[RMDB]
An RNA of 207 nucleotides, treated with 2A3 and DMS and read out base by base.
RNA sequence: GGGAACGACUCGAGUAGAGUCGAAAACGCUGGGAGUAUUGGAGCGACCUGGUGGGAGCUGAAGCGCGCACGGCGAAGAACACCAGGCGCUCAGGCUCCUGUGCUGAAGCGCGCACGGCAACCGAAAGGUGCGAUAAGAGCGGCUUCGGCCGCUCAAUAUAAGUACAGGAUUCGUCCUGUACUUAUAAAAAGAAACAACAACAACAAC
Reactivity to 2A3 in 0.01 (KOAc 150mM, MgCl2 10mM, bicine 150mM(pH8.5), 24C), signal-to-noise 1, nucleotides 027 to 156: c020g020c030u030g000g020g010a000g010u100a210u300u280g240g030a040g010c060g100a300c000c000u000g020g000u040g000g000g050a070g000c020u000g010a130a030g030c020g000c000g000c060a030c040g000g000c030g050a220a010g030a080a010c010a020c010c010a020g010g000c020g010c020u030c000a000g020g010c000u020c000c020u030g070u050g000c010u080g060a100a020g000c000g030c000g010c040a010c030g050g000c010a040a020c020c010g010a070a010a000g000g010u020g020c010g000a000u100a240a010g000a000g000c010g000g000c020u040u020c080g130g010c000c000g000c000u000c000a010a000
Reactivity to DMS in 0.01 (KOAc 150mM, MgCl2 10mM, bicine 150mM(pH8.5), 24C), signal-to-noise 1, nucleotides 027 to 156: c030g010c030u010g010g000g000a060g030u000a050u000u000g050g030a050g050c010g000a090c000c000u020g010g040u000g000g000g030a110g070c030u010g000a110a040g010c000g030c010g030c030a290c090g000g030c020g000a090a110g010a190a170c000a000c000c000a080g040g000c000g020c010u000c030a010g010g010c090u000c030c000u000g000u000g030c010u000g000a070a010g000c030g000c030g030c000a300c040g010g000c030a010a150c020c030g000a130a120a240g000g000u000g020c010g000a200u000a110a120g000a070g020c030g050g010c010u000u010c190g010g030c000c000g040c000u010c010a010a030
Record summary: 2A3 adducts were read by reverse transcription with SuperScript II with manganese. The reactions ran in a buffer of 150 mM KOAc, 10 mM MgCl2 and 150 mM bicine (pH 8.5), at 24 C.